An RNA of 207 nucleotides, treated with 2A3 and read out base by base.
For 2A3, 472 sequencing reads were counted.
The RNA was probed in 150 mM KOAc, 10 mM MgCl2 and 150 mM bicine (pH 8.5) at 24 C.
The data come from the RNA Mapping Database (RMDB), library OK3TST.
[RMDB]
RNA sequence: GGGAACGACUCGAGUAGAGUCGAAAAUCUACGAAUAUCCGAUGCCAACAAAAUUAAUUUUGCCGUCAUUGCAAAAUUACCAGUAUUGAUGGUGCAAGUGGAAAAGUCGACACAUGAGGAGGCAGCUGCGGCGAUUCAAGGAUAUGAUUUAUUGGCACCAUCCUCAACUCUUCGGAGUUGAGGAUGGAAAAGAAACAACAACAACAAC
Reactivity to 2A3 in 0.01 (KOAc 150mM, MgCl2 10mM, bicine 150mM(pH8.5), 24C), signal-to-noise 1, nucleotides 027 to 156: u010c010u030a050c040g010a170a110u000a100u070c050c060g020a090u050g000c010c000a020a020c010a040a120a020a000u140u060a010a080u000u040u000u000g030c000c030g080u100c010a010u030u140g040c010a020a010a020a020u000u000a060c000c060a010g060u080a030u100u040g070a040u070g010g010u030g030c010a010a120g050u140g020g000a000a010a010a000g160u120c050g040a030c000a000c000a150u110g010a080g020g010a030g030g000c010a000g010c090u010g070c010g040g000c030g010a000u070u000c040a050a060g030g000a000u060a040u080g020a020u140u080u170a040u140u000g000g000c040a000